[RMDB]
RNA sequence: GGGAACGACUCGAGUAGAGUCGAAAAUCGCUAAGCUUCGGCUUAGCGAAAAGUCGCGGCUUGAGGGCGUGUACGGCUGCCCACACACACGACCCUCAAGCCAAAGCAUCGUGUUCGCACGAUGCAACGAGUUGUUAUUCUUCGGAAUAACAACUCGAAAAGAAACAACAACAACAAC
Reactivity to 2A3 in 0.01 (KOAc 150mM, MgCl2 10mM, bicine 150mM(pH8.5), 24C), signal-to-noise 4, nucleotides 027 to 126: u030c000g000c000u000a010a000g000c000u030u150c240g090g000c000u030u000a000g000c000g000a000a000a000a010g030u050c040g020c100g120g000c010u020u010g000a000g010g000g000c010g010u010g000u010a020c070g050g040c070u150g020c020c020c010a020c000a000c000a000c020a010c010g300a300c000c000c000u000c000a010a010g000c000c000a010a000a000g000c000a010u000c000g000u000g020u050u070c230g030c070a000c010g010a000u000g000c010a000a020
Reactivity to DMS in 0.01 (KOAc 150mM, MgCl2 10mM, bicine 150mM(pH8.5), 24C), signal-to-noise 2, nucleotides 027 to 126: u000c020g020c000u010a000a000g000c000u000u000c200g050g010c000u010u010a010g010c010g000a000a010a060a090g000u010c090g030c180g040g000c000u000u010g010a030g010g000g020c010g010u000g000u000a060c100g000g010c150u000g010c030c000c030a110c120a060c050a030c020a030c010g000a170c000c000c010u000c000a010a000g010c000c000a010a010a050g000c010a000u000c010g050u000g000u000u010c200g020c000a010c010g000a010u000g000c000a030a070